The record gives the reactivity of an RNA of 177 nucleotides to 2A3 and DMS. For 2A3 the reverse transcriptase was SuperScript II with manganese.
[RMDB]
RNA sequence: GGGAACGACUCGAGUAGAGUCGAAAAUCGCGCGAUAUAUUAUAUAGCGUAUUAUCGCUAUCGCAUAAUACGCCGCAUAGCGGCGAUAUAUCGCUAUUAUCGCUAUCGCAUAAUACGCGCGGCGAUAGAUAAUCAGCGCAUUCGUGCGCUGAUUAUCAAAAGAAACAACAACAACAAC
Reactivity to 2A3 in 0.01 (KOAc 150mM, MgCl2 10mM, bicine 150mM(pH8.5), 24C), signal-to-noise 2, nucleotides 027 to 126: u050c020g000c010g000c020g070a020u000a030u000a020u250u000a080u020a030u120a180g000c010g000u000a170u090u110a060u090c040g020c010u020a010u140c120g000c050a000u010a090a030u040a050c010g000c030c020g000c090a070u110a150g010c010g030g020c040g010a000u020a020u010a020u060c020g020c010u020a130u090u060a020u000c020g010c010u010a020u230c030g000c030a030u140a160a080u200a220c110g050c000g000c000g020g000c010g000a020u030a060
Reactivity to DMS in 0.01 (KOAc 150mM, MgCl2 10mM, bicine 150mM(pH8.5), 24C), signal-to-noise 2, nucleotides 027 to 126: u010c050g030c130g000c000g020a080u010a050u000a020u000u000a080u010a120u030a150g020c010g030u000a060u010u000a030u010c110g010c040u000a050u000c200g010c110a070u000a000a040u000a040c000g020c010c080g000c030a100u010a050g020c070g000g010c040g010a030u000a010u010a010u000c020g020c070u000a100u010u000a020u000c030g000c000u010a080u000c050g000c030a090u000a100a040u000a190c110g030c030g020c300g000g000c020g000a030u000a040

Conditions: 150 mM KOAc, 10 mM MgCl2 and 150 mM bicine (pH 8.5), 24 C.